This 177-nucleotide RNA was probed chemically with 2A3. Conditions: 150 mM KOAc, 10 mM MgCl2 and 150 mM bicine (pH 8.5), 24 C. 2A3 adducts were read by reverse transcription with SuperScript II with manganese.
[RMDB]
RNA sequence: GGGAACGACUCGAGUAGAGUCGAAAAAUACAUGGAAGUCUAUAUCCUCACUAUGCACUGUUGUAGACUCUUCUCUCAACACUUCUGCUUUUCCUGAAGUGCCUAGCUAUCUGAGCAUACAAUAGGGGUGCUAGCACGAGUUCGCUCGUGCUAGCACAAAAGAAACAACAACAACAAC
Reactivity to 2A3 in 0.01 (KOAc 150mM, MgCl2 10mM, bicine 150mM(pH8.5), 24C), signal-to-noise 2, nucleotides 027 to 126: a000u070a050c000a090u090g000g080a100a100g000u000c020u060a100u000a110u270c000c000u000c000a040c000u080a070u110g000c000a000c060u060g110u220u060g000u110a050g080a110c000u010c060u080u010c040u000c000u000c000a050a050c050a000c080u000u100c000u000g140c100u070u000u060u130c000c110u070g000a090a000g050u000g000c000c000u000a000g000c000u140a180u080c030u110g160a000g000c010a000u060a130c000a120a070u080a130g000g260g000